[RMDB]
Source information
Structure probing data (DMS) for a 207-nucleotide construct. The RNA was probed in 150 mM KOAc, 10 mM MgCl2 and 150 mM bicine (pH 8.5) at 24 C. The DMS profile rests on 5,643 reads. In probing experiments dimethyl sulfate is read out at A N1 and C N3, which are open when not base-paired.
RNA sequence: GGGAACGACUCGAGUAGAGUCGAAAAUACCGUCUUCUCCCCGACGGUUUCAAGCCAUAGCUUCACGUUGUGUAGCGUAGGUGGAAGGUAUCGUGUGGUGUAUAAACACCACAUAGUCUCUUAGGGGUCAAGCUGAUAAACUUCGGUUUAUCAGCAACAGUUUAAGUGGGUUCGCCCACUUAAACUGAAAAGAAACAACAACAACAAC
Reactivity to DMS in 0.01 (KOAc 150mM, MgCl2 10mM, bicine 150mM(pH8.5), 24C), signal-to-noise 2, nucleotides 027 to 156: u010a050c000c000g000u020c010u000u000c030u010c030c010c040c060g000a040c030g020g030u000u010u000c060a040a210g040c000c040a140u010a210g000c010u000u010c020a030c030g020u000u020g060u010g050u000a000g000c030g000u000a190g010g010u000g010g030a140a090g010g010u020a070u010c080g040u010g050u000g000g050u000g040u020a180u020a160a150a100c010a020c000c000a000c000a000u000a030g010u010c050u000c010u000u000a240g000g030g000g020u000c050a090a160g000c020u010g000a010u000a000a010a010c000u000u000c280g000g000u000u000u000a000u000c020a010g010c000a000a020